[RMDB]
Chemical mapping of a 177-nucleotide RNA with DMS. DMS adducts were read by reverse transcription with MarathonRT. Conditions: 150 mM KOAc, 10 mM MgCl2 and 150 mM bicine (pH 8.5), 24 C. It was measured as part of the RMDB library TTRDES.
RNA sequence: GGGAACGACUCGAGUAGAGUCGAAAAGAUAUGGACCUUGGUGGACCGAUAAGCUGGUGUCGGAAACGACACUCAGCUUUUGACGGUCCACCAAGGUCCUAAGUCAAAAGGACGCUUCGGCGUCCAAUCCAAGGAAGAAGUUCGCUUCUUCCUUGGAAAAAGAAACAACAACAACAAC
Reactivity to DMS in 0.01 (KOAc 150mM, MgCl2 10mM, bicine 150mM(pH8.5), 24C), signal-to-noise 3, nucleotides 027 to 126: g010a040u000a300u000g010g000a010c000c010u010u010g020g040u000g000g010a030c000c010g000a050u010a030a020g020c000u000g000g010u000g020u010c000g010g000a100a090a230c000g010a030c010a020c000u010c030a000g010c000u000u000u000u010g030a110c160g000g010u000c000c000a020c000c000a000a000g000g000u000c010c010u000a010a090g000u000c030a100a080a110a150g010g020a020c000g010c010u000u010c170g020g020c010g000u000c000c010a040a040